Chemical mapping of a 207-nucleotide RNA with DMS and 2A3. It was measured as part of the RMDB library OK3TST. The 2A3 profile rests on 1,102 reads.

RNA sequence: GGGAACGACUCGAGUAGAGUCGAAAACAAACCACGACCAUCAUGAGAUUCAUCACCAAGACCACCGUCUCUUCAGGCGCUGCUGCAAUCAUCUCCAACGCCGUUAAGGCCACCACCCCCGCGGAUAUUAAUCGACUUAAGAAGAUUACUAUCUGGGCCUCUAGAUUAUUUUCGAAUAAUCUAGAGGAAAAGAAACAACAACAACAAC
Reactivity to DMS in 0.01 (KOAc 150mM, MgCl2 10mM, bicine 150mM(pH8.5), 24C), signal-to-noise 1, nucleotides 027 to 156: c060a080a150a140c040c010a080c070g040a140c020c000a080u000c060a090u010g000a190g020a130u000u000c010a110u030c050a020c060c010a090a110g020a070c040c030a050c050c110g000u000c020u000c010u000u000c020a130g010g020c020g000c030u000g000c050u010g000c030a100a120u010c040a140u010c010u030c010c020a010a050c030g010c000c060g000u000u000a040a090g040g020c000c000a070c020c000a050c070c010c040c010c020g020c090g020g020a020u000a010u000u000a020a020u000c010g000a190c030u000u000a110a250g020a120a300g000a030u000u000a010c060u000a010u000c010u000g060g060g010
Reactivity to 2A3 in 0.01 (KOAc 150mM, MgCl2 10mM, bicine 150mM(pH8.5), 24C), signal-to-noise 2, nucleotides 027 to 156: c020a000a040a020c020c000a050c060g050a050c040c000a030u120c030a050u120g040a020g040a130u130u080c060a050u050c020a060c050c030a060a040g030a040c010c040a010c040c020g080u030c010u000c010u110u100c050a040g030g000c040g030c050u050g020c030u040g010c010a040a100u060c020a060u020c050u020c070c000a040a060c030g000c010c000g040u060u120a050a030g000g000c000c040a030c010c050a030c000c000c030c030c000g040c010g010g000a000u000a000u030u010a010a000u000c000g060a060c060u100u070a150a040g040a030a010g000a050u020u010a000c000u000a010u020c000u030g040g100g000
Conditions: 150 mM KOAc, 10 mM MgCl2 and 150 mM bicine (pH 8.5), 24 C.
DMS adducts were read by reverse transcription with MarathonRT.
For 2A3 the reverse transcriptase was SuperScript II with manganese.